RNA sequence: GGGAACGACUCGAGUAGAGUCGAAAACCAAUCCGCUGUUGAUGGGGACUUGGGUUGAAUACAUUACUUUGAUAUUGUGAAUAGUGCUGCAGUAGCACACGAGUACAGGUGUCUUUUUGAUUGAAUGAUUUAUUUUCCUUUGGGUAGAUACCCAGUAACUCACUAUAUGAUUCGUCAUAUAGUGAGUAAAAGAAACAACAACAACAAC
Reactivity to DMS in 0.01 (KOAc 150mM, MgCl2 10mM, bicine 150mM(pH8.5), 24C), signal-to-noise 3, nucleotides 027 to 156: c010c020a160a190u020c090c030g020c020u010g020u000u010g010a120u000g010g010g030g020a080c040u010u000g010g030g000u000u000g000a100a080u000a080c070a070u000u000a060c040u010u000u000g000a120u000a060u000u000g030u000g010a090a150u000a090g040u000g000c010u000g020c050a200g000u010a050g010c000a030c030a100c080g000a150g010u000a070c090a050g020g030u000g030u000c010u020u000u000u000u010g010a090u000u000g000a070a080u010g010a120u010u000u010a100u040u000u000u000c020c020u000u000u000g000g000g020u000a100g010a150u000a070c000c000c000a070g020u000a070
Reactivity to 2A3 in 0.01 (KOAc 150mM, MgCl2 10mM, bicine 150mM(pH8.5), 24C), signal-to-noise 5, nucleotides 027 to 156: c000c000a010a060u030c020c030g060c100u040g020u130u060g030a110u070g010g010g010g040a030c040u050u030g060g000g010u050u080g080a070a040u120a090c030a040u080u100a100c070u120u120u120g050a040u100a060u100u110g040u020g050a110a120u090a130g020u010g020c020u020g010c040a100g080u190a020g050c010a000c000a000c050g030a010g040u070a060c040a060g030g050u010g030u040c010u060u150u040u060u080g080a070u050u060g020a070a090u050g020a070u050u130u100a100u050u120u040u040c010c000u070u090u050g000g020g000u030a070g050a170u090a090c010c010c010a010g010u030a010